[RMDB]
RNA sequence: GGGAACGACUCGAGUAGAGUCGAAAAGAUAUGGAUGUACUCCCCACCUCUCAUGCUAGUACACCGAAGAACUUCUUCGGAAACGAAGAAGGGAGGUGACUAGCAUGAGAGAGGUACAUCCUAAGUCGGUACCUUUUAUCUUCGGAUAAAAGGUACCAAAAGAAACAACAACAACAAC
Reactivity to 2A3 in 0.01 (KOAc 150mM, MgCl2 10mM, bicine 150mM(pH8.5), 24C), signal-to-noise 2, nucleotides 027 to 126: g160a180u300a200u300g000g030a000u000g010u020a020c020u250c070c050c000c000a020c000c000u000c000u010c000a010u010g010c000u010a030g010u150a260c000a040c020c020g190a300a030g040a040a020c000u010u000c000u020u000c000g030g040a020a040a020c020g010a000a000g000a010a000g000g010g030a020g010g000u020g000a000c010u020a000g000c000a010u010g000a010g000a000g000a010g010g000u000a010c000a000u000c000c010u030a050a030g300u300c220
Reactivity to DMS in 0.01 (KOAc 150mM, MgCl2 10mM, bicine 150mM(pH8.5), 24C), signal-to-noise 1, nucleotides 027 to 126: g000a140u010a120u000g020g000a040u000g020u000a000c000u010c170c020c020c050a300c170c000u000c000u000c000a000u000g000c030u000a000g020u000a220c010a000c000c020g030a180a170g020a140a120c020u000u000c000u000u000c000g000g000a030a120a240c000g020a000a010g010a000a000g000g030g010a020g040g040u010g020a020c000u010a020g040c000a010u000g000a000g000a000g000a030g010g000u000a000c010a000u000c000c000u000a000a100g000u020c180

Record summary
An RNA of 177 nucleotides, treated with 2A3 and DMS and read out base by base. The reactions ran in a buffer of 150 mM KOAc, 10 mM MgCl2 and 150 mM bicine (pH 8.5), at 24 C. Reactivities are given for positions 27 through 126. The data come from the RNA Mapping Database (RMDB), library TTRINS.